[RMDB]
RNA sequence: GGGAACGACUCGAGUAGAGUCGAAAAAGACUGAUUAACGAAUUAAAUUCAGCUUGAUAUUACAGGAUUUAAUCUGAUUUCAGUUCGAUAUCUUGAUAGUACGAGACGUUGAUUAAAGCGUCUUUAAGAAUAUGUCAUUUUUCGAAAUGACAUAUUCAAAAGAAACAACAACAACAAC
Reactivity to 2A3 in 0.01 (KOAc 150mM, MgCl2 10mM, bicine 150mM(pH8.5), 24C), signal-to-noise 9, nucleotides 027 to 126: a000g020a000c010u010g000a010u060u030a080a040c050g040a070a090u010u000a010a010a000u030u010c010a020g100c090u150u170g120a100u120a110u230u240a110c080a080g000g000a010u000u000u020a010a010u000c020u020g070a100u020u010u010c010a010g010u050u050c010g020a010u020a080u170c030u020u090g070a060u070a150g130u080a060c080g010a000g000a010c000g020u020u040g110a260u130u300a200a130a010g000c000g000u000c000u000u010u010a040a010
Reactivity to DMS in 0.01 (KOAc 150mM, MgCl2 10mM, bicine 150mM(pH8.5), 24C), signal-to-noise 7, nucleotides 027 to 126: a120g000a030c010u010g000a000u000u010a070a280c220g010a050a030u000u000a000a000a010u000u000c010a110g000c210u020u030g020a150u050a090u050u030a090c120a110g000g000a010u010u000u010a010a010u000c010u000g000a270u000u000u000c000a000g010u010u000c070g010a100u020a050u000c020u000u000g000a150u030a100g010u010a060c150g000a010g000a020c010g030u020u000g010a180u020u020a060a110a060g000c080g010u000c000u000u000u020a060a100